[RMDB]
RNA sequence: GGGAACGACUCGAGUAGAGUCGAAAAAAAUUAAACCCUACCCGCAAGCUAUGGCCAUCCAGGGUAAGAGUGGCCAGAGGCCACCGCCAUAGCGUCCCGCAAGGGAAAGGGUAGGGUAGGAGGAAAAGUAUAUAUACAUCUUCGGAUGUAUAUAUACAAAAGAAACAACAACAACAAC
Reactivity to 2A3 in 0.01 (KOAc 150mM, MgCl2 10mM, bicine 150mM(pH8.5), 24C), signal-to-noise 1, nucleotides 027 to 126: a000a000a000u150u060a140a100a010c000c010c000u000a010c010c000c000g030c060a070a030g010c000u010a010u000g010g050c030c020a070u120c090c070a150g300g000g000u000a000a000g010a000g010u010g010g040c000c050a060g160a100g140g020c010c000a000c010c000g000c000c000a010u000a010g000c000g000u000c000c000c000g050c030a050a030g010g000g000a080a020a000g010g000g020u010a000g000g000g010u000a000g020g070a030g000g060a050a070a110a040
Reactivity to DMS in 0.01 (KOAc 150mM, MgCl2 10mM, bicine 150mM(pH8.5), 24C), signal-to-noise 2, nucleotides 027 to 126: a030a060a050u030u020a080a050a030c010c000c000u000a010c000c000c010g030c210a110a180g000c010u000a000u000g000g010c000c010a050u010c040c160a290g000g000g010u000a000a000g010a120g030u000g000g000c000c000a160g010a140g050g000c000c000a020c000c000g000c000c000a010u000a020g000c000g010u000c000c000c000g000c300a100a130g000g010g010a060a100a050g000g010g030u000a000g000g000g000u000a000g000g010a130g000g000a050a070a060a130